[RMDB]
RNA sequence: GGGAACGACUCGAGUAGAGUCGAAAAGAUAUGGAUGACGAAGCUAAGCAGGUAGACAUGUAUUGUGCUUUCGGAAACGAAAGCCAAUACAACAGCUACCUGAACGCGCCGUCAUCCUAAGUCAAAAACCGGUAUAGCGUUCGCGCUAUACCGGUAACAAUCCAAUGCUGUUCGCAGCAUUGGAUUGAAAAGAAACAACAACAACAAC
Reactivity to 2A3 in 0.01 (KOAc 150mM, MgCl2 10mM, bicine 150mM(pH8.5), 24C), signal-to-noise 5, nucleotides 027 to 156: g030a000u030a010u050g000g000a000u000g020a010c020g040a200a040g010c030u130a050a020g000c040a000g010g010u010a010g030a090c100a230u300g020u010a020u020u030g090u250g020c000u010u000u000c000g010g010a040a040a030c020g000a000a000a000g000c000c000a000a000u000a000c010a030a020c020a010g010c000u000a000c000c010u020g000a000a010c010g010c000g000c020c010g000u000c000a000u000c000c000u000a000a000g010u000c020a030a010a030a100a120c010c000g000g000u000a000u000a010g010c010g010u030u020c260g000c000g000c140u000a000u000a000c000c000g000g000u000a000a000
Reactivity to DMS in 0.01 (KOAc 150mM, MgCl2 10mM, bicine 150mM(pH8.5), 24C), signal-to-noise 1, nucleotides 027 to 156: g010a140u000a250u000g000g020a000u000g000a000c010g000a010a040g030c030u000a080a290g030c010a020g030g040u000a020g000a070c020a300u000g020u000a010u010u000g020u020g050c000u000u000u000c000g010g010a160a160a230c020g020a010a010a040g000c020c010a000a010u000a000c010a020a100c060a130g030c010u000a000c050c000u000g000a010a080c170g000c010g000c010c020g020u000c020a000u000c000c010u000a020a060g000u020c030a040a060a050a100a100c000c000g010g000u000a010u000a000g070c000g000u000u000c300g000c000g020c000u000a030u000a000c000c000g000g020u000a010a070